[RMDB]
RNA sequence: GGGAACGACUCGAGUAGAGUCGAAAAGGUUCUUCGGAACCCGCGUGACCUUUGUGCAUCACAGGUUGUUGUCAGACCUGACGUUCCCAUUGGGAACGGGAGGGUCUUGGAUUUACAACUCACAGUGCACUCUGGUACUGCUCCCCUUCGGGGGAAAAUAUGAGGUGGCAUUCGUGCCACCUCAUAUAAAAGAAACAACAACAACAAC
Reactivity to 2A3 in 0.01 (KOAc 150mM, MgCl2 10mM, bicine 150mM(pH8.5), 24C), signal-to-noise 1, nucleotides 027 to 156: g000g010u020u020c000u030u090c250g120g020a030a020c020c100c000g020c000g100u070g060a220c000c000u020u010u000g030u010g030c010a020u070c020a120c040a140g000g030u000u000g030u000u000g020u020c000a000g000a000c000c000u070g040a020c000g010u000u020c010c000c020a270u300u300g010g000g000a040a010c010g040g050g120a040g000g000g030u010c000u050u150g030g000a000u050u100u300a020c000a000a040c040u070c050a040c000a010g020u000g020c000a010c000u030c000u000g000g000u070a230c020u080g030c000u000c000c020c000c020u000u070c280g000g000g000g000g000a000a010a170